[RMDB]
RNA sequence: GGGAACGACUCGAGUAGAGUCGAAAAAAAAACGCCUAUGAGAAGGAUAAGGCAGUGGCCCGUAAGUUAGAACGUAUGGCUGAUCAGGCUAUGACUUCUAUGUAUAAGCAAGCACGUGCUGAAGACAAAGGCUACUACUUCGGUAGUAGCAAAAGAAACAACAACAACAAC
Reactivity to DMS in 0.01 (KOAc 150mM, MgCl2 10mM, bicine 150mM(pH8.5), 24C), signal-to-noise 5, nucleotides 027 to 129: a010a010a020a030a020c100g000c030c000u040a080u020g000a120g000a090a030g010g030a120u010a010a040g000g020c050a050g020u030g000g000c000c010c020g000u000a070a050g020u050u020a000g010a020a010c080g060u020a020u050g020g000c000u000g030a130u000c230a000g000g000c020u070a040u000g020a000c000u000u040c030u010a030u020g020u020a070u020a060a050g020c000a050a030g010c080a030c090g040u020g030c020u000g020a020a020g030a050c100a040a010a040g020
Reactivity to 2A3 in 0.01 (KOAc 150mM, MgCl2 10mM, bicine 150mM(pH8.5), 24C), signal-to-noise 7, nucleotides 027 to 129: a000a000a000a000a000c070g010c000c000u040a060u110g090a080g040a130a020g090g020a040u080a070a090g030g000c050a040g020u030g040g040c040c020c020g030u060a060a020g040u020u060a020g000a030a000c070g010u020a020u040g010g000c000u020g040a280u160c070a030g030g000c020u030a030u090g070a040c010u000u000c010u040a040u060g070u000a070u030a150a020g030c050a030a010g030c000a030c050g020u040g000c000u030g010a010a010g020a010c050a050a060a020g110